The record gives the reactivity of an RNA of 177 nucleotides to 2A3 and DMS. The data come from the RNA Mapping Database (RMDB), library OK2TST. For DMS, 34,677 sequencing reads were counted. For DMS the reverse transcriptase was MarathonRT.
[RMDB]
RNA sequence: GGGAACGACUCGAGUAGAGUCGAAAAUUGAGUGCCUGGAACUGGAUAACCUGAUGGAAACGGCGUAUGCAACGGCUGUUUCUGCCAACUUCCGUACCGAAAGCCGUGGCGCGCAUAGCCGCUUCGAGUAAUGAAAAUGAUUCGUCAUUUUCAUUACAAAAGAAACAACAACAACAAC
Reactivity to 2A3 in 0.01 (KOAc 150mM, MgCl2 10mM, bicine 150mM(pH8.5), 24C), signal-to-noise 9, nucleotides 027 to 126: u080u090g030a030g040u050g030c020c030u050g040g030a050a040c040u070g010g020a040u060a090a080c020c020u070g050a090u110g110g000a030a020a010c010g020g000c040g050u060a050u130g060c040a050a010c040g080g000c010u020g060u030u050u010c020u030g010c010c010a040a040c040u100u030c030c030g030u050a080c020c030g050a090a030a010g010c010c020g030u030g040g040c090g000c000g000c070a030u050a050g020c010c010g010c020u030u040c030g070a070
Reactivity to DMS in 0.01 (KOAc 150mM, MgCl2 10mM, bicine 150mM(pH8.5), 24C), signal-to-noise 9, nucleotides 027 to 126: u010u010g010a090g020u000g010c030c030u000g010g010a080a080c080u000g010g010a080u010a080a120c120c050u000g010a090u010g010g000a020a030a050c020g010g000c020g020u000a040u010g010c120a140a040c080g010g010c010u000g010u000u000u000c030u000g010c060c050a050a080c120u000u000c050c050g020u000a100c110c060g000a050a080a080g000c030c010g020u000g000g020c130g010c140g010c050a040u000a070g010c030c010g000c050u000u000c040g010a190